[RMDB]
RNA sequence: GGGAACGACUCGAGUAGAGUCGAAAAGAUAUGGAAGGAGGAUAGAGGCUUGGAUUUAGGCUCGGAAACGAGCCUUGUCAGCCUAUAUCUCCUUCCUAAGUCAAAGCACAAUCUUCGGAUUGUGCAAGAUAAUCGAAUCGUUCGCGAUUCGAUUAUCAAAAGAAACAACAACAACAAC
Reactivity to DMS in 0.01 (KOAc 150mM, MgCl2 10mM, bicine 150mM(pH8.5), 24C), signal-to-noise 2, nucleotides 027 to 126: g040a040u000a300u000g000g000a010a020g000g010a040g010g020a040u000a010g010a020g000g020c010u000u010g040g010a020u000u030u000a010g020g010c010u010c000g000g000a070a090a200c030g000a020g020c000c000u010u000g010u000c000a050g020c000c000u000a040u000a000u000c010u000c010c010u000u000c010c000u000a010a060g000u000c080a080a120a200g000c000a010c000a000a000u000c000u000u030c270g020g000a010u000u000g020u010g020c000a020a010
Reactivity to 2A3 in 0.01 (KOAc 150mM, MgCl2 10mM, bicine 150mM(pH8.5), 24C), signal-to-noise 3, nucleotides 027 to 126: g010a020u110a040u190g000g020a010a020g030g050a050g180g120a030u030a060g070a000g020g030c070u180u250g240g000a070u300u300u250a000g010g000c000u000c010g020g010a000a050a030c010g010a020g010c000c000u010u000g000u010c000a000g020c010c040u020a010u000a000u010c000u000c010c000u020u000c010c000u000a010a000g010u000c030a090a110a020g000c000a000c000a010a000u000c000u040u150c300g140g000a010u000u000g000u010g010c000a010a000
An RNA of 177 nucleotides, treated with DMS and 2A3 and read out base by base.
The data come from the RNA Mapping Database (RMDB), library TTRDES.
The DMS profile rests on 2,977 reads.
Values are in units of 0.01, from 0 to 300, in steps of 10.
For DMS the reverse transcriptase was MarathonRT.